[RMDB]
RNA sequence: GGGAACGACUCGAGUAGAGUCGAAAACUCAAUCUCUUCUUCUUCCACUAACAUCUCUUCCUCUUCAGGUGGGGCUGCAGGAGGAGGGGGAACGCGGCGACGCCGGCGGCGCACGGGCAGACGGUCGAUGAAUCUUUCAAUGACCUCUCCGCGGCGGCUCUAUGACGACAUUCGUGUCGUCAUAGAGAAAAGAAACAACAACAACAAC
Reactivity to 2A3 in 0.01 (KOAc 150mM, MgCl2 10mM, bicine 150mM(pH8.5), 24C), signal-to-noise 1, nucleotides 027 to 156: c010u050c030a000a070u090c070u030c000u110u010c000u090u000c000u120u010c030c030a110c130u150a100a030c000a120u030c000u000c000u040u000c010c000u030c000u050u120c050a010g010g010u010g000g030g000g000c000u020g030c060a070g040g000a000g000g000a000g030g000g000g010g010a010a070c000g000c040g060g000c010g060a050c050g010c040c020g030g050c000g020g040c030g000c010a090c050g000g080g000c030a000g030a090c180g010g020u000c000g030a050u060g070a120a140u120c150u050u250u010c050a080a090u130g000a000c000c000u020c000u000c000c000g000c010g010g000c000g000g010
This 207-nucleotide RNA was probed chemically with 2A3. Values cover nucleotides 27 to 156. Source: RMDB library OK3TST, as collected in RNAgym. For 2A3, 674 sequencing reads were counted.